This 177-nucleotide RNA was probed chemically with 2A3 and DMS. The DMS profile rests on 3,671 reads. Values cover nucleotides 27 to 126. The 2A3 profile rests on 11,202 reads.
RNA sequence: GGGAACGACUCGAGUAGAGUCGAAAAGAUAUGGAAGGUAGGGAGAGCAGUACUACCCACCUCGGAAACGAGAGGUACGUGCUCAUCGAUCUACCUUCCUAAGUCAAAAGCAAGGUUCGCCUUGCAACCUACAUUUUAGCUUCGGCUAAAAUGUAGGAAAAGAAACAACAACAACAAC
Reactivity to 2A3 in 0.01 (KOAc 150mM, MgCl2 10mM, bicine 150mM(pH8.5), 24C), signal-to-noise 3, nucleotides 027 to 126: g020a030u110a070u190g000g000a000a000g010g000u000a010g000g010g020a060g010a000g000c040a000g010u010a010c000u050a040c000c050c020a140c050c000u000c000g020g030a080a040a020c020g000a000g020a020g040g010u030a030c170g120u050g020c010u000c020a130u300c010g010a010u010c010u000a000c000c000u010u000c000c000u000a000a000g000u000c010a050a090a000a050g020c000a000a010g000g030u110u150c200g170c040c000u000u000g000c000a000a010
Reactivity to DMS in 0.01 (KOAc 150mM, MgCl2 10mM, bicine 150mM(pH8.5), 24C), signal-to-noise 4, nucleotides 027 to 126: g010a030u000a300u000g010g020a010a010g010g010u010a010g000g000g000a230g010a020g030c130a110g020u010a000c020u010a080c040c040c040a270c190c010u000c010g000g000a120a100a130c010g010a010g020a100g000g000u000a000c100g010u000g020c000u000c070a220u000c070g000a210u020c010u000a010c020c000u000u000c000c000u000a030a040g010u000c080a060a070a090a110g020c000a020a000g000g010u000u000c240g010c000c000u010u010g000c000a060a050